Source: RMDB library OK2TST, as collected in RNAgym.
The record gives the reactivity of an RNA of 177 nucleotides to DMS and 2A3.
Reactivities are given for positions 27 through 126.
DMS adducts were read by reverse transcription with MarathonRT.
High DMS reactivity at an A or C suggests that its Watson-Crick edge is free.
Conditions: 150 mM KOAc, 10 mM MgCl2 and 150 mM bicine (pH 8.5), 24 C.
The 2A3 profile rests on 3,814 reads.

RNA sequence: GGGAACGACUCGAGUAGAGUCGAAAAUCACGUCGCUCAUGGGAUUUGAUGGAAUUUAUUUCUUUGUCUAUGUCGACCUCACGCGUGACAUACUUUGCUUCAUCAAACACAUAACGAAGUGAAGGUCUAGCAUUUAGCAUUUCGAUGCUAAAUGCUAAAAAGAAACAACAACAACAAC
Reactivity to DMS in 0.01 (KOAc 150mM, MgCl2 10mM, bicine 150mM(pH8.5), 24C), signal-to-noise 4, nucleotides 027 to 126: u010c020a040c050g000u000c020g000c080u010c200a020u000g010g000g010a200u000u000u000g010a030u010g000g010a030a070u010u020u000a060u030u020u010c080u000u000u010g000u010c120u000a010u000g000u010c020g010a090c050c050u010c160a090c240g010c120g020u000g010a030c050a060u000a090c090u000u000u000g000c250u000u000c010a040u000c040a010a030a040c130a120c090a050u000a040a060c040g010a010a020g010u010g010a010a050g000g010u000c080
Reactivity to 2A3 in 0.01 (KOAc 150mM, MgCl2 10mM, bicine 150mM(pH8.5), 24C), signal-to-noise 3, nucleotides 027 to 126: u040c000a000c020g030u000c020g020c060u040c090a040u020g030g000g160a250u030u020u100g030a020u020g000g040a040a060u110u140u050a150u040u300u030c060u030u070u060g050u000c040u040a030u040g070u050c020g090a090c000c020u080c020a070c020g050c050g010u030g000a010c000a020u070a060c020u020u050u060g060c020u000u020c000a050u030c010a050a050a020c070a010c000a100u070a090a000c020g020a040a010g000u000g030a020a010g050g000u020c030